[RMDB]
RNA sequence: GGGAACGACUCGAGUAGAGUCGAAAAGAUAUGGAGACUUAGGGAGCUCGUGGUCGGAAACGACCAUCGAGCGAAGAACUAACAUGUCUCCUAAGUCAAAACGGCUGCAAGUUCGCUUGCAGCCGAACAAUGGGGAUAUGUUCGCAUAUCCCCAUUGAAAAGAAACAACAACAACAAC
Reactivity to 2A3 in 0.01 (KOAc 150mM, MgCl2 10mM, bicine 150mM(pH8.5), 24C), signal-to-noise 2, nucleotides 027 to 126: g000a000u030a010u050g010g010a010g000a000c000u010u000a010g010g020g000a010g020c010u010c020g040u020g010g010u010c000g010g010a010a000a000c010g000a010c000c010a040u170c110g000a000g020c010g000a040a000g000a000a000c000u000a020a040c080a300u260g000u000c020u020c000c000u000a010a000g000u000c000a030a020a080a170c020g000g000c010u020g000c000a020a000g020u090u150c230g160c220u010u020g000c000a000g000c020c000g000a010a020
Reactivity to DMS in 0.01 (KOAc 150mM, MgCl2 10mM, bicine 150mM(pH8.5), 24C), signal-to-noise 4, nucleotides 027 to 126: g000a020u000a030u010g000g010a050g010a020c010u000u000a020g000g010g000a030g030c000u000c010g040u000g000g000u000c010g040g010a010a000a030c010g000a020c000c000a000u030c050g010a020g000c010g010a050a080g000a150a230c010u000a030a020c300a160u010g000u000c000u000c000c010u000a000a110g000u010c020a080a040a160a120c010g000g000c010u000g000c020a010a020g010u000u010c300g010c000u000u000g010c000a000g030c010c000g000a000a030